[RMDB]
RNA sequence: GGGAACGACUCGAGUAGAGUCGAAAAUGCCAUCGGGGGUCUUGAUCGCGGUCUGUUCGAACACCAAGGCUUCUAUCUCAGUGACCGCAGGGUCGCCCAGAUGGCUCAGGAUCGCCCCUAGGGCAACGGUAGGCGUUUUAUUCGUAAAACGCCUACCAAAAGAAACAACAACAACAAC
Reactivity to 2A3 in 0.01 (KOAc 150mM, MgCl2 10mM, bicine 150mM(pH8.5), 24C), signal-to-noise 2, nucleotides 027 to 126: u070g000c010c010a000u010c030g030g000g000g000g030u000c000u080u180g040a030u070c050g000c010g000g040u010c020u050g020u040u040c010g020a050a000c180a090c160c030a130a080g120g020c080u090u000c040u020a110u010c050u010c190a090g030u000g070a050c000c000g000c070a010g020g040g000u000c010g080c000c000c000a010g010a000u000g020g010c020u000c000a000g000g030a050u120c060g070c000c000c000c020u110a200g050g020g060c010a010a000c050